[RMDB]
The record gives the reactivity of an RNA of 177 nucleotides to 2A3 and DMS.
The RNA was probed in 150 mM KOAc, 10 mM MgCl2 and 150 mM bicine (pH 8.5) at 24 C.
High DMS reactivity at an A or C suggests that its Watson-Crick edge is free.
Reactivities are given for positions 27 through 126.
The data come from the RNA Mapping Database (RMDB), library TTRDEL.
The 2A3 profile rests on 2,877 reads.
RNA sequence: GGGAACGACUCGAGUAGAGUCGAAAAGAUAUGGACCGAAGAGCUAAGCUAUACUACCCACCUCGGAAACGAGAGGUAUAGAACGCGCUCCGGUCCUAAGUCAAACGUUAACCUUCGGGUUAACGAACUAAUCUGGGUACUUCGGUACCCAGAUUAGAAAAGAAACAACAACAACAAC
Reactivity to 2A3 in 0.01 (KOAc 150mM, MgCl2 10mM, bicine 150mM(pH8.5), 24C), signal-to-noise 1, nucleotides 027 to 126: g010a000u040a010u110g000g020a000c010c000g090a130a050g010a030g000c050u120a150a030g070c010u100a150u020a240c000u090a090c060c020c030a130c080c000u000c000g020g000a050a010a000c000g020a000g000a000g000g020u010a010u000a020g090a170a060c080g000c000g000c010u000c010c000g020g020u010c010c000u020a060a000g000u030c020a120a040a090c020g010u000u010a000a000c000c000u000u040c300g060g000g000u010u000a000a000c010g010a020a020
Reactivity to DMS in 0.01 (KOAc 150mM, MgCl2 10mM, bicine 150mM(pH8.5), 24C), signal-to-noise 2, nucleotides 027 to 126: g000a040u000a300u000g010g000a010c010c000g040a030a020g000a030g020c010u000a200a180g010c000u010a000u000a010c000u010a080c110c080c120a300c190c000u000c000g010g020a080a110a180c010g020a000g000a100g000g010u000a020u000a000g000a030a050c180g020c030g020c010u000c000c000g020g020u010c000c000u010a020a040g010u000c060a130a100a220c010g010u000u000a000a000c000c010u000u000c110g020g030g010u000u010a000a010c000g000a030a150